Description: Structure probing data (2A3 and DMS) for a 177-nucleotide construct. Reactivities are given for positions 27 through 126. DMS adducts were read by reverse transcription with MarathonRT. In probing experiments dimethyl sulfate is read out at A N1 and C N3, which are open when not base-paired. For DMS, 787 sequencing reads were counted.
[RMDB]
RNA sequence: GGGAACGACUCGAGUAGAGUCGAAAAGAUAUGGAUUGUCGAAGAACGAUGACCACGAUGAAGUCGGAAACGAUGGAGUGGCAUCGGGAGACAAUCCUAAGUCAAAAGGUAUAGUUCGCUAUACCAACCAAAAAAAUCAGUUCGCUGAUUUUUUUGGAAAAGAAACAACAACAACAAC
Reactivity to 2A3 in 0.01 (KOAc 150mM, MgCl2 10mM, bicine 150mM(pH8.5), 24C), signal-to-noise 1, nucleotides 027 to 126: g030a050u060a030u140g000g010a000u000u000g000u000c020g170a300a050g000a100a090c070g020a010u010g300a300c000c000a000c030g170a300u100g020a000a060g000u000c010g000g060a030a000a010c020g020a010u050g030g000a030g000u000g030g030c000a010u010c000g020g000g000a010g000a000c010a000a010u000c000c000u000a070a010g070u000c030a020a000a020a170g070g000u010a000u010a000g040u050u060c270g050c140u010a000u000a000c000c000a000a060
Reactivity to DMS in 0.01 (KOAc 150mM, MgCl2 10mM, bicine 150mM(pH8.5), 24C), signal-to-noise 1, nucleotides 027 to 126: g000a060u000a300u000g020g000a000u020u010g010u000c000g040a120a130g030a130a160c000g010a020u000g000a240c000c010a020c000g000a110u010g020a110a180g000u000c000g020g000a110a040a120c000g000a020u000g000g000a040g000u010g040g020c000a000u000c010g000g000g020a100g000a010c000a000a010u010c000c000u000a020a050g000u000c020a070a080a100a090g000g020u000a000u020a050g010u000u020c230g000c010u000a010u000a010c000c000a030a090